Chemical mapping of a 207-nucleotide RNA with 2A3 and DMS.
The DMS profile rests on 2,336 reads.
The 2A3 profile rests on 1,054 reads.
The reactions ran in a buffer of 150 mM KOAc, 10 mM MgCl2 and 150 mM bicine (pH 8.5), at 24 C.
Values cover nucleotides 27 to 156.

RNA sequence: GGGAACGACUCGAGUAGAGUCGAAAAAAGAACUGAUAUAAAUCAAGAUGAAAGAAACAUUCUAUAGCAAAUGGACAAAAAGGCUGAGUGCUGUGACUCACACCUGUAAUCCCAGCUCUUUUGGGAGGCCAAAGUGGGUGGAUUGCUUGAGCCCAGACAGCGUAGUUUUAUUCGUAAAACUACGCUGAAAAGAAACAACAACAACAAC
Reactivity to 2A3 in 0.01 (KOAc 150mM, MgCl2 10mM, bicine 150mM(pH8.5), 24C), signal-to-noise 2, nucleotides 027 to 156: a000a000g070a060a050c090u100g010a010u070a020u040a220a100a030u050c030a020a090g080a090u130g050a080a160a180g050a030a140a000c020a070u170u000c060u110a100u070a050g020c030a060a090a100u030g020g020a020c020a070a080a060a070a010g020g020c010u000g000a010g050u050g050c030u040g060u060g020a000c000u000c030a050c000a040c050c020u030g030u070a010a000u030c010c000c020a020g040c020u050c080u230u140u150u040g000g010g020a020g020g000c080c020a080a030a000g040u060g000g030g000u050g010g030a050u090u020g020c030u000u060g030a020g020c020c000c000a000g010a090
Reactivity to DMS in 0.01 (KOAc 150mM, MgCl2 10mM, bicine 150mM(pH8.5), 24C), signal-to-noise 1, nucleotides 027 to 156: a100a060g000a070a130c060u010g010a100u000a070u010a040a080a100u020c070a020a190g020a140u000g000a110a060a160g020a200a100a090c030a070u000u010c000u000a100u000a110g020c040a040a050a080u010g010g000a050c000a040a110a060a100a070g000g000c000u000g030a080g000u010g030c030u000g000u000g000a020c020u000c000a010c050a020c060c020u000g000u010a060a150u000c010c000c000a080g000c060u000c070u000u000u000u000g010g040g010a100g020g020c060c010a030a000a090g010u000g000g030g000u000g000g010a070u010u000g000c010u010u000g010a180g010c040c010c000a110g020a260